[RMDB]
RNA sequence: GGGAACGACUCGAGUAGAGUCGAAAAGUGCAUGGCCACGGACCGUGUGCCAGGCCCUGUCCCGUCACUGUAGACACACAGUCAGGGCCUGCUGAGGACACGGGCGAGGGGAGCACCCUUGCCAGCCAUCCUCAAACCUAUUCGUAGGUUUGAGGAUAAAAGAAACAACAACAACAAC
Reactivity to DMS in 0.01 (KOAc 150mM, MgCl2 10mM, bicine 150mM(pH8.5), 24C), signal-to-noise 7, nucleotides 027 to 126: g020u000g020c050a050u000g020g020c020c050a130c190g020g010a120c050c010g030u000g010u010g020c050c010a020g000g010c000c000c000u000g000u000c040c050c080g000u000c090a060c090u000g010u000a120g000a130c180a090c140a090c190a060g010u000c010a020g000g000g000c010c000u000g000c150u010g010a130g000g000a050c070a040c060g010g010g010c020g010a020g000g010g010g010a250g020c180a160c000c010c010u000u000g000c000c010a090g000c070c070
Reactivity to 2A3 in 0.01 (KOAc 150mM, MgCl2 10mM, bicine 150mM(pH8.5), 24C), signal-to-noise 5, nucleotides 027 to 126: g070u060g020c040a100u090g060g000c030c040a120c120g030g030a050c030c020g020u020g010u000g090c030c000a000g010g000c010c010c000u020g020u050c030c030c020g100u110c030a040c070u130g060u180a080g110a200c030a000c000a000c000a110g000u020c000a010g000g000g010c000c000u010g000c040u080g070a100g060g060a010c020a020c050g020g000g000c000g010a030g000g020g010g000a070g070c060a100c000c000c010u000u030g000c000c000a020g010c020c000